[RMDB]
RNA sequence: GGGAACGACUCGAGUAGAGUCGAAAACUGCUGAUCGGCGAGAUGGUGUUCGUGCCGAACCCGUCGGCGCGUGCAGAAGAUGACGGGAUUCUCAUGGGCUACGGCUGGCACCGCGGCCGCGACGAAGACAAUCUUAGCACUUCGGUGCUAAGAUUGUAAAAGAAACAACAACAACAAC
Reactivity to DMS in 0.01 (KOAc 150mM, MgCl2 10mM, bicine 150mM(pH8.5), 24C), signal-to-noise 2, nucleotides 027 to 126: c040u000g000c060u000g010a100u010c050g000g030c020g000a120g020a080u000g010g020u000g010u000u010c040g030u000g000c020c020g000a030a050c150c010c000g010u010c060g020g010c030g020c050g000u000g010c130a080g000a070a090g020a130u010g020a070c060g020g000g000a180u000u010c010u000c060a100u010g020g000g010c040u000a050c030g010g020c020u000g000g000c060a060c010c050g020c010g000g000c010c010g000c030g000a140c120g000a090a140g000
Reactivity to 2A3 in 0.01 (KOAc 150mM, MgCl2 10mM, bicine 150mM(pH8.5), 24C), signal-to-noise 2, nucleotides 027 to 126: c040u060g000c090u040g010a130u100c020g000g040c060g070a110g030a140u120g030g060u050g030u140u260c080g040u050g020c010c020g040a030a030c020c000c000g010u010c040g110g040c050g000c040g000u070g000c060a010g070a210a000g050a130u100g070a010c020g000g120g000a030u160u000c030u030c020a100u140g070g070g000c020u080a020c040g010g000c010u050g040g000c050a000c060c000g030c010g010g070c000c040g000c040g040a060c010g040a090a030g100

Annotation
Conditions: 150 mM KOAc, 10 mM MgCl2 and 150 mM bicine (pH 8.5), 24 C. Chemical mapping of a 177-nucleotide RNA with DMS and 2A3. The DMS profile rests on 2,384 reads. It was measured as part of the RMDB library OK2TST. 2A3 is a SHAPE reagent: it acylates the 2'-hydroxyl of flexible nucleotides of all four kinds.